This 207-nucleotide RNA was probed chemically with 2A3 and DMS. For DMS, 4,912 sequencing reads were counted.

[RMDB]
RNA sequence: GGGAACGACUCGAGUAGAGUCGAAAAAGAAGUACGUUCGCGUACUUCUAAAAAAGAUAUGGACUCGGUAUUCAGCAACAGCCUUACUCGGAAACGAGUAAGGACAUGCUGGUACGCGAGUCCUAAGUCAAAAAAGAACUACGUUCGCGUAGUUCAAGUCUUAUGUAUUGUUCGCAAUACAUAAGACAAAAGAAACAACAACAACAAC
Reactivity to 2A3 in 0.01 (KOAc 150mM, MgCl2 10mM, bicine 150mM(pH8.5), 24C), signal-to-noise 4, nucleotides 027 to 156: a000g010a000a000g000u000a000c010g020u040u100c230g000c000g110u010a000c010u010u000c000u010a000a010a000a000a000a000g050a040u080a040u130g000g010a000c000u010c010g030g000u050a020u180u300c010a000g010c010a020a100c020a160g040c000c000u000u000a000c000u000c000g020g020a060a080a040c010g010a000g000u000a000a000g000g000a000c010a000u020g000c010u010g000g010u000a010c080g030c010g070a000g010u000c000c000u000a000a000g000u000c010a000a020a010a040a020a090g020a000a010c000u030a020c010g040u040u140c300g000c000g120u010a000g000u000u010c010a000a010
Reactivity to DMS in 0.01 (KOAc 150mM, MgCl2 10mM, bicine 150mM(pH8.5), 24C), signal-to-noise 2, nucleotides 027 to 156: a010g000a030a000g060u000a000c000g030u000u000c300g020c000g030u000a010c000u000u010c000u000a000a030a050a080a060a070g000a140u020a300u000g010g000a010c000u000c000g020g000u000a010u000u000c000a030g020c000a050a100c080a160g000c000c000u000u000a010c000u010c020g020g010a210a130a300c000g030a020g040u000a000a000g010g010a000c040a130u000g000c000u010g000g000u000a000c000g030c020g000a030g050u000c000c000u000a000a060g000u020c060a010a070a080a100a140a130g000a040a050c000u000a000c030g040u000u000c300g050c040g010u000a000g010u010u000c020a030a130
The data come from the RNA Mapping Database (RMDB), library RNAMAK. Reactivities are given for positions 27 through 156. The reactions ran in a buffer of 150 mM KOAc, 10 mM MgCl2 and 150 mM bicine (pH 8.5), at 24 C. The 2A3 profile rests on 7,857 reads.